[RMDB]
RNA sequence: GGGAACGACUCGAGUAGAGUCGAAAAUGAGCAAAGCGGUUAUCAACGAAGCAGGUAUCGCUUUUACCGGCCAUACCGAGUGGCUUGCCAAGCUCGCUGGCGUUCAACGAACCGUCAUGCUUUUUGAGGUGCAUAAUCGUUUCGACGAUUAUGCACCAAAAGAAACAACAACAACAAC
Reactivity to DMS in 0.01 (KOAc 150mM, MgCl2 10mM, bicine 150mM(pH8.5), 24C), signal-to-noise 3, nucleotides 027 to 126: u010g000a000g000c010a020a180a180g020c020g020g010u000u000a070u000c190a060a040c080g040a290a040g040c040a150g010g000u010a030u000c300g000c020u000u000u000u030a110c270c130g000g010c010c110a020u000a000c030c010g010a130g020u020g010g020c010u010u010g020c180c250a070a090g010c030u000c030g010c010u010g000g000c010g000u000u000c190a040a150c200g000a010a000c000c010g000u010c060a300u000g000c000u000u000u000u000u000g000a300
Reactivity to 2A3 in 0.01 (KOAc 150mM, MgCl2 10mM, bicine 150mM(pH8.5), 24C), signal-to-noise 1, nucleotides 027 to 126: u130g010a000g000c020a010a000a010g000c010g000g060u070u030a100u120c050a000a030c030g020a050a010g010c020a010g050g030u010a010u020c020g000c000u040u000u020u040a030c030c040g000g000c010c000a010u000a020c030c000g010a040g020u220g000g000c000u060u080g150c050c060a000a010g010c010u040c040g000c010u050g190g070c030g030u040u070c050a060a030c080g050a020a010c000c000g040u030c040a050u080g030c000u020u050u000u010u100g100a070
Annotation:
The record gives the reactivity of an RNA of 177 nucleotides to DMS and 2A3. DMS adducts were read by reverse transcription with MarathonRT. The data come from the RNA Mapping Database (RMDB), library OK2TST. For 2A3 the reverse transcriptase was SuperScript II with manganese.